[RMDB]
RNA sequence: GGGAACGACUCGAGUAGAGUCGAAAAAUCGUUGACCCGGUCAAAGCGACUCAUUGUUAACACUUCUUAACAGCUCUCCUAACAGCGUAACUAACAACUGUUUUCGUCCUUAAACCAACGAUAACGGGACUAUUUUCGUGUUCGCACGAAAAUAGUCAAAAGAAACAACAACAACAAC
Reactivity to 2A3 in 0.01 (KOAc 150mM, MgCl2 10mM, bicine 150mM(pH8.5), 24C), signal-to-noise 5, nucleotides 027 to 126: a000u010c000g000u020u030g080a100c010c020c020g000g010u080c050a090a040a020g030c020g050a030c010u030c040a090u040u080g060u030u050a070a010c020a030c120u150u140c020u070u070a040a060c020a040g010c000u010c010u010c000c010u050a070a040c030a030g030c010g080u080a030a050c010u050a050a020c060a020a040c020u020g060u010u010u040u040c010g010u000c010c010u070u140a030a060a010c040c000a020a020c040g050a040u040a060a040c040g060g040
Reactivity to DMS in 0.01 (KOAc 150mM, MgCl2 10mM, bicine 150mM(pH8.5), 24C), signal-to-noise 2, nucleotides 027 to 126: a010u000c100g030u010u010g000a120c090c130c060g000g030u000c100a050a050a120g000c050g000a070c060u000c020a190u000u000g000u020u010a060a070c080a080c100u050u040c000u000u000a020a100c030a080g010c020u000c060u000c000c030u000a050a060c090a040g010c070g020u000a040a110c070u000a020a090c220a050a100c020u000g000u000u000u000u010c010g000u000c020c090u010u060a100a060a170c170c110a010a020c050g000a010u000a020a030c010g020g000